[RMDB]
RNA sequence: GGGAACGACUCGAGUAGAGUCGAAAAUACGGCUGUUCGCCGUUUAAAGCGGUACGCGAGCUGGGUUCAGAACGUCGUGAGACAGUUCGGUCCCUAUCCUCCGCGGGCGCAGGAGAAUCGAGGGAGGAGUUAGUGUAUUAUUCGUAAUACACUAACUAAAAGAAACAACAACAACAAC
Reactivity to 2A3 in 0.01 (KOAc 150mM, MgCl2 10mM, bicine 150mM(pH8.5), 24C), signal-to-noise 9, nucleotides 027 to 126: u150a010c010g010g010c020u060g110u200u140c120g000c010c000g000u010u010u040a050a040a000g010c010g030g030u110a050c030g020c040g040a010g020c030u040g010g040g030u100u120c040a070g010a030a010c010g010u010c010g050u080g060a080g000a020c040a050g000u010u070c010g010g020u030c010c000c000u020a060u040c010c010u020c040c030g010c000g010g020g000c040g000c040a050g030g090a080g040a080a080u100c060g020a080g020g030g010a050g020g000
Reactivity to DMS in 0.01 (KOAc 150mM, MgCl2 10mM, bicine 150mM(pH8.5), 24C), signal-to-noise 9, nucleotides 027 to 126: u020a050c020g010g010c010u010g010u020u020c120g000c000c010g000u000u010u020a050a130a140g010c020g010g010u010a100c080g020c040g010a040g010c200u000g010g000g010u010u010c030a110g000a010a020c020g010u000c010g000u050g010a230g010a020c010a080g010u000u000c000g010g000u000c010c000c000u010a070u010c080c020u000c040c040g010c030g000g010g010c050g010c050a110g000g000a100g010a080a070u010c060g000a080g010g010g000a070g010g000

This 177-nucleotide RNA was probed chemically with 2A3 and DMS.
For 2A3 the reverse transcriptase was SuperScript II with manganese.
The RNA was probed in 150 mM KOAc, 10 mM MgCl2 and 150 mM bicine (pH 8.5) at 24 C.